[RMDB]
RNA sequence: GGGAACGACUCGAGUAGAGUCGAAAAACGAUCGAACAGCAAUUCCAGAAGCUCGCGGCGGAGGCAAUCACGGUCCAGCGGGUGCACGGUGACCUGCACUUGGGACAGGUGCUGCGUACCCCGGAAACCGCAUAGACAGGUUCGCCUGUCUAUGCGGAAAAGAAACAACAACAACAAC
Reactivity to 2A3 in 0.01 (KOAc 150mM, MgCl2 10mM, bicine 150mM(pH8.5), 24C), signal-to-noise 2, nucleotides 027 to 126: a000c010g000a040u150c070g100a000a060c030a010g060c070a000a180u110u050c040c030a010g020a080a000g050c050u030c040g030c040g060g000c010g030g020a020g040g090c050a080a000u060c040a020c120g080g010u020c000c000a080g020c080g040g000g000u010g010c000a000c030g040g000u190g170a140c000c000u030g000c010a060c110u150u160g180g010g090a040c000a000g000g000u000g030c010u000g000c000g000u020a020c000c030c000c000g040g020a060a000a020
Reactivity to DMS in 0.01 (KOAc 150mM, MgCl2 10mM, bicine 150mM(pH8.5), 24C), signal-to-noise 1, nucleotides 027 to 126: a000c150g000a010u000c050g000a160a090c060a120g000c040a070a110u090u050c060c030a150g000a070a050g010c090u010c030g000c030g000g000c000g000g000a060g000g010c030a150a090u000c110a070c060g010g000u020c010c100a120g000c050g000g010g000u000g010c000a000c020g000g000u000g000a120c000c040u000g070c300a210c040u000u000g000g000g000a210c100a010g000g000u040g020c000u000g030c070g020u000a000c000c000c010c080g020g020a080a100a040

The record gives the reactivity of an RNA of 177 nucleotides to 2A3 and DMS. Values cover nucleotides 27 to 126. It was measured as part of the RMDB library OK1LIB.